[RMDB]
RNA sequence: GGGAACGACUCGAGUAGAGUCGAAAACAGAACUAAUUCGUUAGUUCUGGCAUAUAACCUUCACCAAUUAGCUUCAAAUAAGUGGUAAAAAUAAAAAUAAAACGGGGUCUGCAUUCGUGCAGACCAACCUUGGAGCAUUAUUCGUAAUGCUCCAAGGAAAAGAAACAACAACAACAAC
Reactivity to 2A3 in 0.01 (KOAc 150mM, MgCl2 10mM, bicine 150mM(pH8.5), 24C), signal-to-noise 1, nucleotides 027 to 126: c020a010g010a000a000c010u010a000a000u110u140c140g070u000u040a000g000u000u000c000u010g020g000c150a110u290a030u000a080a080c020c000u000u000c020a000c020c000a010a000u040u080a040g150c060u190u160c120a070a020a180u090a080a020g000u000g040g030u090a110a070a030a090a040u150a070a100a090a070a030u240a080a050a000a000c030g300g090g000g040u000c000u000g000c000a000u010u080c210g050u000g000c000a000g000a000c000c000a010a010